[RMDB]
An RNA of 177 nucleotides, treated with DMS and 2A3 and read out base by base. For 2A3 the reverse transcriptase was SuperScript II with manganese. Values cover nucleotides 27 to 126. For DMS, 2,206 sequencing reads were counted. The RNA was probed in 150 mM KOAc, 10 mM MgCl2 and 150 mM bicine (pH 8.5) at 24 C.

RNA sequence: GGGAACGACUCGAGUAGAGUCGAAAAGAUAACGCGUUCGCGCGUUAUCAAAUAAACUUGACAAAUGCCGGUCAAGAAAAACGGCAUUAUAAGAUUGGUGAAAAAGAUAUAACUUCGGUUAUAUCAAGAUUAUUAAGUACUUCGGUACUUAAUAAUCAAAAGAAACAACAACAACAAC
Reactivity to DMS in 0.01 (KOAc 150mM, MgCl2 10mM, bicine 150mM(pH8.5), 24C), signal-to-noise 2, nucleotides 027 to 126: g000a010u000a000a010c010g010c010g030u000u020c200g010c020g020c010g000u000u000a000u000c000a010a110a080u010a060a160a120c040u000u000g000a050c050a110a040a000u000g000c000c000g010g000u000c040a030a100g010a020a070a030a080a120c020g000g010c000a010u010u010a060u010a090a080g000a120u010u000g010g010u000g010a090a040a050a150a130g000a010u000a010u000a000a000c000u000u010c180g040g010u000u000a000u010a000u000c000a040a110
Reactivity to 2A3 in 0.01 (KOAc 150mM, MgCl2 10mM, bicine 150mM(pH8.5), 24C), signal-to-noise 2, nucleotides 027 to 126: g010a000u010a010a020c000g020c000g030u040u050c180g000c000g000c000g100u010u000a000u010c000a000a000a000u030a000a030a000c030u030u060g010a010c030a050a060a010u000g010c010c000g020g060u100c080a070a130g200a160a090a020a010a010c010g010g030c010a000u000u050a050u030a090a070g110a140u070u220g060g020u110g170a160a060a020a030a060g010a000u010a000u000a040a000c000u000u080c240g100g010u000u000a010u000a000u020c000a000a010